RNA sequence: GGGAACGACUCGAGUAGAGUCGAAAAGAUAUGGAUUUCGAUGAGUGUGAAGCCAAUGAUGUCGGAAACGAUUGAGGCUACACACGAGAAAUCCUAAGUCAAACUAGUCAUGUUCGCAUGACUAGAACAGAAUGAUAGCGUUCGCGCUAUCAUUCUGAAAAGAAACAACAACAACAAC
Reactivity to 2A3 in 0.01 (KOAc 150mM, MgCl2 10mM, bicine 150mM(pH8.5), 24C), signal-to-noise 2, nucleotides 027 to 126: g040a000u070a030u170g020g000a020u020u040u020c130g080a220u210g120a070g070u030g000u030g020a050a060g000c020c010a070a230u180g110a030u090g010u040c000g000g030a110a070a070c020g000a010u000u030g030a020g000g000c000u000a030c000a000c000a000c030g000a030g020a010a000a000u010c000c000u030a110a000g050u020c070a060a060a090c000u010a000g010u000c000a010u000g030u080u100c300g000c110a010u010g000a000c000u000a000g000a040a010
Reactivity to DMS in 0.01 (KOAc 150mM, MgCl2 10mM, bicine 150mM(pH8.5), 24C), signal-to-noise 3, nucleotides 027 to 126: g010a020u000a300u010g000g010a030u000u000u000c000g010a170u010g010a180g010u000g020u000g000a100a040g020c010c010a080a130u010g000a110u000g030u000c010g000g010a150a060a160c020g010a010u000u000g000a120g010g020c000u000a080c000a000c020a010c000g010a130g000a000a010a010u000c000c000u000a010a060g010u000c050a110a100a190c010u000a010g000u000c000a000u010g000u000u010c220g000c000a000u000g000a020c000u000a000g000a040a180

An RNA of 177 nucleotides, treated with 2A3 and DMS and read out base by base. The data come from the RNA Mapping Database (RMDB), library TTRDEL. The DMS profile rests on 2,925 reads. The RNA was probed in 150 mM KOAc, 10 mM MgCl2 and 150 mM bicine (pH 8.5) at 24 C.